Source: RMDB library OK3TST, as collected in RNAgym.
Structure probing data (2A3) for a 207-nucleotide construct.
The reactions ran in a buffer of 150 mM KOAc, 10 mM MgCl2 and 150 mM bicine (pH 8.5), at 24 C.
RNA sequence: GGGAACGACUCGAGUAGAGUCGAAAAUAUGGCAGGUUCGACUACGAGUCCGGGGAAAGAAUUGCCCGCGACCUGCUUUCGCGCCCGCCACAGGACCGGCCGACGGCGAUUGCGGCUGCCAGCGAUCAGCAGGCCAUCGGCGCGCUGCGCACAGCGCAUUCCUCACCCUAUUCGUAGGGUGAGGAAUAAAAGAAACAACAACAACAAC
Reactivity to 2A3 in 0.01 (KOAc 150mM, MgCl2 10mM, bicine 150mM(pH8.5), 24C), signal-to-noise 1, nucleotides 027 to 156: u300a090u030g020g000c030a060g000g010u040u040c000g020a010c090u070a040c080g090a030g030u010c010c010g000g020g000g050a100a170a190g070a230a270u090u210g120c000c040c000g060c060g010a060c010c010u010g000c000u030u020u030c000g000c020g000c000c020c000g020c000c010a050c060a030g050g070a130c010c000g000g020c030c010g000a070c060g070g020c010g010a040u040u090g000c050g050g000c060u110g080c090c030a030g010c030g100a090u020c000a050g140c020a020g040g170c000c010a040u020c030g020g020c010g020c000g010c000u030g000c040g030c080a180c010a100g040c000g000c000
Values cover nucleotides 27 to 156.